[RMDB]
RNA sequence: GGGAACGACUCGAGUAGAGUCGAAAAUAAAACACGUAACGUGAGCACAGCUAGUAGUGCAGCAGGACCGAAACCUGCAGCGAAAGGGAUCAAGACCCUGUUCGCGCAAAAACUAGUGAAAAAAAAACCAGAAUUAACAGUUCGCUGUUAAUUCUGGAAAAGAAACAACAACAACAAC
Reactivity to 2A3 in 0.01 (KOAc 150mM, MgCl2 10mM, bicine 150mM(pH8.5), 24C), signal-to-noise 1, nucleotides 027 to 126: u080a000a060a020a010c030a000c020g120u170a300a000c110g000u070g060a010g000c020a020c010a040g000c010u000a000g010u030a010g050u070g000c010a000g030c000a010g020g000a060c000c170g050a030a050a040c000c040u020g000c030a010g010c000g000a030a020a000g000g000g040a030u190c140a100a050g100a160c010c000c010u080g180u010u010c010g000c000g000c030a110a000a000a000a000c000u020a000g040u040g130a080a000a000a010a010a000a000a000a000
Reactivity to DMS in 0.01 (KOAc 150mM, MgCl2 10mM, bicine 150mM(pH8.5), 24C), signal-to-noise 1, nucleotides 027 to 126: u010a040a110a040a090c030a010c000g030u020a060a080c120g030u000g000a300g000c000a030c000a070g010c010u000a000g030u000a060g010u000g000c000a130g000c000a000g000g000a020c050c110g010a080a040a040c000c000u000g020c040a140g020c020g030a000a050a030g010g000g000a040u030c300a130a300g020a090c010c010c000u010g010u000u000c000g010c000g000c120a030a070a020a060a010c000u000a000g000u000g000a000a000a000a000a100a090a040a130a190
Chemical mapping of a 177-nucleotide RNA with 2A3 and DMS. For 2A3 the reverse transcriptase was SuperScript II with manganese. DMS adducts were read by reverse transcription with MarathonRT. Conditions: 150 mM KOAc, 10 mM MgCl2 and 150 mM bicine (pH 8.5), 24 C.